[RMDB]
RNA sequence: GGGAACGACUCGAGUAGAGUCGAAAAAGUAGUCUGUGUAAACAUACAAGCUCUGAUGUGUCUUUUGUUCACACCGAACAGUGGUGCCAUACAACUUGAUGAGUUCCUGAUUUAGUCUUCCCAGGGACAGGCAUGUGCCAAGCAGCGAAAAAUAAAAGCAGGCAUUAUACUUCGGUAUAAUGCCUGCAAAAGAAACAACAACAACAAC
Reactivity to 2A3 in 0.01 (KOAc 150mM, MgCl2 10mM, bicine 150mM(pH8.5), 24C), signal-to-noise 2, nucleotides 027 to 156: a000g110u090a010g000u000c030u020g020u030g050u140a020a150a020c030a020u140a050c010a070a020g000c000u010c020u060g040a070u070g040u010g080u100c030u010u060u130u050g050u040u030c030a060c110a120c150c090g010a060a050c000a030g020u030g050g000u040g070c020c000a030u060a150c050a240a140c080u040u060g020a040u030g010a050g030u030u030c000c000u010g070a090u070u030u220a090g010u000c020u010u010c040c020c010a010g000g000g000a000c000a020g040g000c010a020u220g050u110g070c030c000a060a070g010c010a060g010c080g220a070a000a050a010a000u250a010a040a160a000